Source: RMDB library OK2TRN, as collected in RNAgym. An RNA of 177 nucleotides, treated with 2A3 and DMS and read out base by base.
RNA sequence: GGGAACGACUCGAGUAGAGUCGAAAAUUAACGGGCCAUCAAUCUGGCUAUAGCCGAACUGUAACCACGGGAAGCCGGUCAGUACCCAACCGCGCAGAAACUCGGUCACUUGCCAGAGGGCAGGGGCACUUAGUUCGGGAUUCGUCCCGAACUAAGUAAAAGAAACAACAACAACAAC
Reactivity to 2A3 in 0.01 (KOAc 150mM, MgCl2 10mM, bicine 150mM(pH8.5), 24C), signal-to-noise 1, nucleotides 027 to 126: u060u030a070a100c010g000g050g000c030c000a080u100c060a040a130u000c010u040g000g000c000u020a010u140a110g020c010c000g000a090a070c010u030g020u080a060a060c060c030a050c110g000g030g030a090a050g050c000c000g010g030u020c010a050g060u090a120c010c010c000a000a010c020c000g080c010g090c070a000g140a040a080a030c040u010c000g020g000u040c030a080c140u070u050g040c000c000a030g010a070g030g040g010c080a060g010g000g050g000c050
Reactivity to DMS in 0.01 (KOAc 150mM, MgCl2 10mM, bicine 150mM(pH8.5), 24C), signal-to-noise 2, nucleotides 027 to 126: u000u000a080a160c090g010g040g000c050c040a070u000c140a060a080u000c110u000g000g000c000u000a050u000a090g020c060c010g010a030a160c040u010g010u000a090a120c170c130a040c070g000g000g000a170a200g010c080c040g000g010u000c050a060g020u000a100c040c030c010a100a060c010c010g020c170g020c020a040g010a060a090a170c080u000c050g010g010u030c050a100c240u000u000g000c000c020a160g000a050g000g000g000c060a070g010g010g010g040c180
DMS adducts were read by reverse transcription with MarathonRT.
Conditions: 150 mM KOAc, 10 mM MgCl2 and 150 mM bicine (pH 8.5), 24 C.
2A3 adducts were read by reverse transcription with SuperScript II with manganese.
The DMS profile rests on 1,155 reads.
For 2A3, 1,156 sequencing reads were counted.